Annotation:
The record gives the reactivity of an RNA of 207 nucleotides to 2A3 and DMS. Conditions: 150 mM KOAc, 10 mM MgCl2 and 150 mM bicine (pH 8.5), 24 C. The data come from the RNA Mapping Database (RMDB), library OK3TST.
[RMDB]
RNA sequence: GGGAACGACUCGAGUAGAGUCGAAAACGGUGUGAUUCACACGUCUGUUGCUUCUGUGGAGAAGGCUGACUUUGAAUAUGGUGCUCCAAGUGCGCAUCCGCGUCGACCUACCAAGUUCGGAAUUCGCCACUGGCAUGACAAGAGUGAAUGGGAAUCCAUCAGUCUUCGAAUUCGUUCGAAGACUGAUAAAAGAAACAACAACAACAAC
Reactivity to 2A3 in 0.01 (KOAc 150mM, MgCl2 10mM, bicine 150mM(pH8.5), 24C), signal-to-noise 4, nucleotides 027 to 156: c060g030g060u080g030u120g090a070u020u040c000a000c020a020c100g060u000c020u080g150u140u070g020c000u100u110c070u140g000u010g000g010a040g000a020a020g030g000c010u020g000a020c020u010u060u100g060a090a030u180a110u300g030g020u070g070c050u080c150c090a170a040g090u210g200c010g000c030a110u160c150c160g000c010g060u070c030g050a030c010c010u020a040c040c010a000a020g020u100u090c010g000g000a030a040u050u000c010g040c030c010a010c030u030g030g000c030a010u050g030a050c040a060a030g040a040g110u040g030a070a040u070g000g070g060a050a030u050c030c010
Reactivity to DMS in 0.01 (KOAc 150mM, MgCl2 10mM, bicine 150mM(pH8.5), 24C), signal-to-noise 1, nucleotides 027 to 156: c040g020g000u000g020u020g040a160u000u000c030a070c000a070c020g030u010c060u000g000u000u000g000c010u000u020c050u000g000u020g000g020a060g030a040a040g000g020c020u000g030a060c030u000u000u000g000a110a210u000a130u020g020g040u000g020c050u000c090c120a130a080g000u000g020c030g040c030a190u010c140c070g080c080g000u000c000g020a040c010c020u020a160c070c040a010a120g000u000u000c050g030g020a040a050u000u000c030g010c000c000a040c020u000g000g020c070a090u000g020a060c080a060a050g020a120g030u010g020a090a080u000g000g000g000a170a080u000c040c080